[RMDB]
RNA sequence: GGGAACGACUCGAGUAGAGUCGAAAACGGAGUCCUAGGCACCACAGCUCCACGUGAUGUCCGAGCAAUGGCAGAGUCCUAGGCAUCACACAUCUUCGGGCGAUGCUGAAUCAAAUGGCGGGGCUAGGUAAAGUAAAAUGUUCGCAUUUUACUUUACAAAAGAAACAACAACAACAAC
Reactivity to DMS in 0.01 (KOAc 150mM, MgCl2 10mM, bicine 150mM(pH8.5), 24C), signal-to-noise 8, nucleotides 027 to 126: c110g010g010a100g010u010c020c030u010a100g000g000c030a090c030c020a080c120a130g010c020u000c020c050a090c120g020u000g010a030u010g010u000c020c080g010a100g010c080a090a070u010g010g030c060a170g010a130g010u010c010c010u000a090g000g000c020a020u000c020a040c050a160c110a070u010c080u010u000c080g000g000g010c040g010a060u000g010c060u000g000a070a060u010c110a050a070a070u010g010g010c080g010g010g000g010c050u000a050g010
Reactivity to 2A3 in 0.01 (KOAc 150mM, MgCl2 10mM, bicine 150mM(pH8.5), 24C), signal-to-noise 7, nucleotides 027 to 126: c030g040g020a030g040u040c020c030u070a080g030g050c040a020c070c010a040c030a050g020c010u010c020c010a050c060g020u030g030a070u070g040u010c030c040g010a020g020c020a040a140u280g030g000c100a080g070a030g300u110c010c000u020a010g010g010c000a010u020c000a000c000a000c000a050u040c040u170u100c040g030g010g010c040g030a040u090g000c040u040g060a050a080u090c050a090a060a130u110g060g000c070g020g020g010g000c010u010a040g030

An RNA of 177 nucleotides, treated with DMS and 2A3 and read out base by base.
The data come from the RNA Mapping Database (RMDB), library VIROID.
Reactivities are given for positions 27 through 126.